This 177-nucleotide RNA was probed chemically with DMS and 2A3. For 2A3 the reverse transcriptase was SuperScript II with manganese. It was measured as part of the RMDB library 15KREP.

[RMDB]
RNA sequence: GGGAACGACUCGAGUAGAGUCGAAAACCACCCAUCGGGGUCCGACGUUCCUACCCUUUCUUACCUGUGGCCGGCAUGGUCCCAGCCUCCUCGCUGGCGCCGGCUGGGCAACAUUCCGAGGGGACCGCCAGUAAAUGAAGUUCGCUUCAUUUACUGGAAAAGAAACAACAACAACAAC
Reactivity to DMS in 0.01 (KOAc 150mM, MgCl2 10mM, bicine 150mM(pH8.5), 24C), signal-to-noise 3, nucleotides 027 to 126: c030c040a200c070c010c030a110u010c050g020g000g020g000u000c070c050g030a190c060g010u000u000c000c000u000a100c020c010c040u000u010u000c060u000u000a100c150c120u010g010u000g010g000c010c010g040g030c000a110u010g040g000u000c300c000c010a050g020c010c090u010c140c080u000c130g020c020u000g010g010c140g010c000c000g000g030c000u000g020g000g000c040a030a050c060a070u000u010c110c090g010a070g000g000g000g010a100c130c160g000
Reactivity to 2A3 in 0.01 (KOAc 150mM, MgCl2 10mM, bicine 150mM(pH8.5), 24C), signal-to-noise 1, nucleotides 027 to 126: c000c000a030c000c010c000a140u080c050g000g000g050g120u060c100c050g060a090c040g040u000u050c000c020u020a070c020c000c000u070u130u050c020u040u080a090c030c040u040g040u100g080g020c010c000g010g050c040a070u140g010g000u010c030c000c000a000g000c000c000u050c020c000u050c030g020c020u030g020g030c020g030c010c000g020g000c000u000g000g010g030c000a000a030c010a070u050u130c050c000g000a040g000g030g000g000a020c020c000g040